The data come from the RNA Mapping Database (RMDB), library RFMREP. The record gives the reactivity of an RNA of 177 nucleotides to DMS and 2A3. DMS (dimethyl sulfate) methylates the pairing face of unpaired adenines and cytosines. For 2A3 the reverse transcriptase was SuperScript II with manganese. For DMS, 775 sequencing reads were counted. Values cover nucleotides 27 to 126. Conditions: 150 mM KOAc, 10 mM MgCl2 and 150 mM bicine (pH 8.5), 24 C.

RNA sequence: GGGAACGACUCGAGUAGAGUCGAAAACUUUUUCCAGAUCUAUUCGGAUAAACCGAAUAACUCGUCGUAGUCAAGCAUUGCUUGAGGUGGCACAGGGAAGAGCUGUGGUGGCUCAGUUCGUAAAGCUGUUAACUUCACAGUUCGCUGUGAAGUUAACAAAAGAAACAACAACAACAAC
Reactivity to DMS in 0.01 (KOAc 150mM, MgCl2 10mM, bicine 150mM(pH8.5), 24C), signal-to-noise 1, nucleotides 027 to 126: c160u000u020u000u000u010c000c000a110g010a180u000c080u030a020u000u000c000g000g000a300u010a050a080a230c010c030g000a000a000u000a040a060c100u000c070g030u000c120g000u000a160g000u000c010a020a020g040c000a100u000u030g030c020u000u000g000a020g030g020u010g010g000c030a100c130a040g000g000g000a080a110g000a000g010c010u020g030u000g030g030u000g030g010c020u000c040a020g000u010u020c100g010u010a080a090a160g000c160u000
Reactivity to 2A3 in 0.01 (KOAc 150mM, MgCl2 10mM, bicine 150mM(pH8.5), 24C), signal-to-noise 1, nucleotides 027 to 126: c010u070u020u000u080u010c010c010a030g000a080u020c060u110a040u000u030c000g040g000a090u100a130a190a160c000c000g010a010a000u000a060a020c060u010c060g080u020c030g050u120a060g100u060c010a060a000g030c040a230u080u260g020c040u020u030g020a020g000g120u030g020g040c010a010c040a080g000g000g060a050a050g000a080g020c010u010g010u050g100g120u030g070g000c000u050c030a000g060u060u070c030g030u060a000a030a130g060c030u020